[RMDB]
RNA sequence: GGGAACGACUCGAGUAGAGUCGAAAACGGAUGCCCAGGUCGGACCGCGAGGAGGUGGAGAUGCCAUGCCGACCCGAAGAGGAAAGAAGAACGCGAGACGCGAACCUGUGAGUGGAAACCCGCUUUAGUUCUAUAACGUGUUCGCACGUUAUAGAACAAAAGAAACAACAACAACAAC
Reactivity to DMS in 0.01 (KOAc 150mM, MgCl2 10mM, bicine 150mM(pH8.5), 24C), signal-to-noise 2, nucleotides 027 to 126: c060g020g000a130u000g000c020c010c000a090g010g010u000c060g000g000a100c060c070g000c070g010a150g000g010a070g010g030u010g000g040a150g030a100u010g000c030c010a070u000g000c040c020g010a100c040c010c000g020a030a090g000a060g000g020a070a060a020g000a070a090g010a120a140c070g020c040g010a070g010a080c150g000c040g010a070a110c030c030u020g000u000g000a050g000u000g020g000a090a080a130c100c000c050g020c040u000u010u000a140
Reactivity to 2A3 in 0.01 (KOAc 150mM, MgCl2 10mM, bicine 150mM(pH8.5), 24C), signal-to-noise 1, nucleotides 027 to 126: c010g050g000a010u050g000c030c020c000a010g080g020u020c020g000g040a050c050c020g040c030g070a070g060g010a040g000g050u060g070g010a080g020a040u130g080c050c030a050u100g020c000c000g020a020c000c000c020g060a100a070g020a080g070g060a020a040a120g070a010a000g050a080a000c020g050c020g040a030g040a060c060g010c010g090a010a080c000c000u040g000u050g070a070g040u050g000g000a020a070a060c020c010c010g080c020u030u050u060a040
Background: An RNA of 177 nucleotides, treated with DMS and 2A3 and read out base by base. The DMS profile rests on 1,081 reads. Conditions: 150 mM KOAc, 10 mM MgCl2 and 150 mM bicine (pH 8.5), 24 C. High 2A3 reactivity points to a flexible backbone, as in loops and unpaired stretches.